This 207-nucleotide RNA was probed chemically with 2A3 and DMS.
The reactions ran in a buffer of 150 mM KOAc, 10 mM MgCl2 and 150 mM bicine (pH 8.5), at 24 C.
For 2A3, 690 sequencing reads were counted.
Reactivities are given for positions 27 through 156.
The DMS profile rests on 1,950 reads.
For 2A3 the reverse transcriptase was SuperScript II with manganese.

RNA sequence: GGGAACGACUCGAGUAGAGUCGAAAAGAAGCAGUCCUUAUUGUGUGUGAUGUUUAGUCAUCGCACUGUACCUACGGGCUGCCAACGUAGGUCCAAUGUGCCGAGAGGCACUAGAAGUACGGCUUAUUAUGAAGCAUCGCCGUACCAAUGAUGCUGAAAUCAUGAGUCCUUUCGAGGACUCAUGAUUAAAAGAAACAACAACAACAAC
Reactivity to 2A3 in 0.01 (KOAc 150mM, MgCl2 10mM, bicine 150mM(pH8.5), 24C), signal-to-noise 2, nucleotides 027 to 156: g200a030a000g020c000a010g000u040c000c070u150u130a190u200u300g100u000g010u000g000u000g000a010u040g030u000u120u200a260g080u110c040a010u030c010g000c000a000c000u030g060u120a090c030c020u010a000c010g000g010g000c010u010g000c010c010a080a040c040g090u120a020g070g050u060c000c040a040a150u070g000u000g000c020c000g040a060g020a010g070g000c000a000c000u000a000g070a100a000g020u020a000c000g000g000c000u080u020a070u230u110a140u300g150a120a000g030c020a050u070c030g000c000c000g020u000a000c000c000a150a190u190g020a050u100g020c000u070g020a070
Reactivity to DMS in 0.01 (KOAc 150mM, MgCl2 10mM, bicine 150mM(pH8.5), 24C), signal-to-noise 1, nucleotides 027 to 156: g010a060a110g010c000a020g010u010c090c030u000u010a080u000u000g010u000g020u010g030u010g000a000u010g010u020u030u030a240g000u010c000a050u000c020g070c010a010c000u000g090u000a070c050c020u000a090c090g000g020g010c070u010g050c000c070a140a080c020g000u000a050g000g000u040c040c060a050a160u000g010u000g000c000c000g020a190g000a300g050g010c000a020c010u010a050g000a160a060g000u000a010c010g020g020c020u000u000a120u010u010a170u000g020a100a120g040c090a080u000c200g000c020c040g000u000a050c020c000a000a200u000g020a070u000g010c040u030g040a150
Values are in units of 0.01, from 0 to 300, in steps of 10.